Structure probing data (DMS and 2A3) for a 207-nucleotide construct. The reactions ran in a buffer of 150 mM KOAc, 10 mM MgCl2 and 150 mM bicine (pH 8.5), at 24 C. The 2A3 profile rests on 2,273 reads. For DMS the reverse transcriptase was MarathonRT.
[RMDB]
RNA sequence: GGGAACGACUCGAGUAGAGUCGAAAAUCAGCAAUCCAGAGGAGGCACCUUUAGUGGCAAGACGAGUGAAUAACAACCCUAAUAGUCCAACCUCAACAGUCAACCGUAAACGAACAAUUGUGGACUUUAGAGAGCUAGAGGAGAUCAGCUCACAAGCCUCUAACGCUGUAUUCGUACAGCGUUAGAGAAAAGAAACAACAACAACAAC
Reactivity to DMS in 0.01 (KOAc 150mM, MgCl2 10mM, bicine 150mM(pH8.5), 24C), signal-to-noise 1, nucleotides 027 to 156: u010c120a050g030c010a050a130u010c010c000a130g050a130g050g010a160g010g020c050a070c010c010u020u000u000a120g070u010g000g020c010a000a110g020a110c130g040a100g040u000g010a070a040u040a130a130c100a100a070c020c020c000u010a080a060u000a080g000u020c020c000a020a050c040c060u010c090a050a150c100a080g040u010c040a060a090c000c070g000u000a070a040a080c010g020a040a100c040a070a100u000u000g010u000g000g000a040c010u010u010u000a100g000a070g010a040g020c030u010a090g030a130g050g010a160g000a150u000c070a080g030c010u060c010a070c060a140a120g000c150
Reactivity to 2A3 in 0.01 (KOAc 150mM, MgCl2 10mM, bicine 150mM(pH8.5), 24C), signal-to-noise 4, nucleotides 027 to 156: u110c020a010g020c030a010a050u070c050c000a010g010a020g030g000a030g020g000c030a050c000c000u020u040u060a130g020u120g040g000c050a050a020g050a050c070g020a050g040u070g070a060a050u140a140a050c070a040a100c010c000c010u030a070a030u050a130g010u000c010c010a040a100c040c020u100c040a030a050c020a030g120u070c020a020a060c060c030g170u180a120a020a050c060g130a030a020c040a100a100u120u140g050u050g050g010a000c000u010u020u040a090g030a000g010a000g040c020u070a040g000a030g060g020a060g000a080u040c030a010g010c000u000c000a030c030a040a030g030c000
The data come from the RNA Mapping Database (RMDB), library OK3TST.